[RMDB]
RNA sequence: GGGAACGACUCGAGUAGAGUCGAAAAGAUAUGGAUCAUUACGCUUUUGACGCUCGUGACAUCGGAAACGAUGUCUCGAGCGAUAAGCGUGAAUGAUCCUAAGUCAAAACAGCUGUUCGCAGCUGAACACCACAAAGAGGUUCGCCUCUUUGUGGUGAAAAGAAACAACAACAACAAC
Reactivity to 2A3 in 0.01 (KOAc 150mM, MgCl2 10mM, bicine 150mM(pH8.5), 24C), signal-to-noise 3, nucleotides 027 to 126: g050a010u100a030u220g000g000a010u000c000a000u010u030a020c000g010c020u090u080u110u220g300a120c040g000c000u010c010g020u010g000a000c010a000u010c000g000g050a060a030a060c010g000a020u000g000u000c000u000c000g000a010g000c000g000a000u000a000a000g000c010g000u020g090a020a030u000g000a000u000c000c010u000a010a010g000u000c030a000a010a150a280c010a000g000c000u040g050u170u160c300g000c200a000g020c010u000g020a050a060
Reactivity to DMS in 0.01 (KOAc 150mM, MgCl2 10mM, bicine 150mM(pH8.5), 24C), signal-to-noise 3, nucleotides 027 to 126: g000a070u010a300u020g000g010a010u010c000a010u000u000a040c000g010c000u000u010u010u010g030a230c160g010c000u000c010g020u010g000a010c000a000u000c000g000g000a140a100a190c010g040a000u000g000u010c000u000c000g000a010g030c000g010a020u000a000a020g000c000g010u000g020a010a010u010g000a000u000c000c000u000a010a090g000u000c040a120a110a100a250c010a010g010c000u000g020u000u030c180g020c010a020g000c010u010g000a090a160